[RMDB]
RNA sequence: GGGAACGACUCGAGUAGAGUCGAAAAGAUACUCGUUUCGCGUUGGCUGCCUAAUUCAAGGAAUUAGCGUGCCUUCAUGCUAAGGGUUUGAUAUCUGCUAAAACCCGGUGCAUUCAUCAAUGCAGGUCUCAUCCAAAUGCCUUCGGGCAUUUGGAAACACGAAGCUCUGAUUCGUCAGAGCUUCGUGAAAAGAAACAACAACAACAAC
Reactivity to 2A3 in 0.01 (KOAc 150mM, MgCl2 10mM, bicine 150mM(pH8.5), 24C), signal-to-noise 1, nucleotides 027 to 156: g050a000u070a030c010u020c030g030u020u050u020c040g010c030g040u000u050g000g000c060u100g030c010c040u030a040a020u010u030c150a230a160g220g090a060a010u000u010a030g020c040g040u040g010c030c010u020u030c040a090u130g000c010u010a000a020g000g010g000u000u010u000g030a030u060a020u010c010u000g020c020u000a020a020a020a020c050c000c000g010g000u000g000c030a050u020u220c030a130u080c110a210a160u210g000c000a000g010g000u020c020u030c070a110u020c020c000a000a000a000u000g000c000c010u030u060c300g060g000g030c010a000u010u010u010g000g000a000a000a000